Structure probing data (2A3 and DMS) for a 207-nucleotide construct. For 2A3, 963 sequencing reads were counted. DMS adducts were read by reverse transcription with MarathonRT. The RNA was probed in 150 mM KOAc, 10 mM MgCl2 and 150 mM bicine (pH 8.5) at 24 C.
[RMDB]
RNA sequence: GGGAACGACUCGAGUAGAGUCGAAAAUGAGUCAUCAAAGGCGAGUCUGUUUAUAGUCGCGACUCUUGUCAUAGUCAAGAAGGUUGAAACUUCCAGGAAAAAACUUCGAAUUGGGAGGGCGAUCCUCCCGGUGAACUGACCGUACCCCAAACCGACACUAGGGAAAGAUGUUCGCAUCUUUCCCUAGAAAAGAAACAACAACAACAAC
Reactivity to 2A3 in 0.01 (KOAc 150mM, MgCl2 10mM, bicine 150mM(pH8.5), 24C), signal-to-noise 2, nucleotides 027 to 156: u120g000a030g030u030c020a010u010c010a160a040a050g080g010c020g000a020g020u010c010u060g140u050u140u070a140u100a050g050u040c050g000c030g030a000c010u000c000u050u060g040u000c020a110u090a120g010u020c010a030a000g060a030a010g020g000u090u100g050a100a090a040c060u100u020c060c020a000g090g000a070a110a020a020a040a030c050u080u050c060g010a130a050u070u070g000g000g000a010g000g010g000c120g040a030u120c000c000u000c010c010c010g000g000u020g020a030a000c020u000g020a010c030c000g060u100a060c020c010c020c000a020a080a080c070c000g000a030c010a020
Reactivity to DMS in 0.01 (KOAc 150mM, MgCl2 10mM, bicine 150mM(pH8.5), 24C), signal-to-noise 2, nucleotides 027 to 156: u000g010a150g030u020c020a150u000c050a070a070a130g000g010c060g010a070g020u000c020u000g010u010u000u000a110u010a080g010u010c040g010c010g020a060c030u000c060u000u010g000u000c090a060u010a200g020u000c000a100a100g020a090a050g030g040u000u000g010a170a110a120c020u000u000c100c020a100g000g040a020a060a060a100a060a110c050u000u000c050g010a080a170u000u000g020g000g010a020g020g010g000c170g000a220u000c000c000u010c000c010c000g040g000u010g000a100a110c080u000g000a050c000c020g020u010a160c040c000c000c050a030a090a070c010c020g010a080c060a160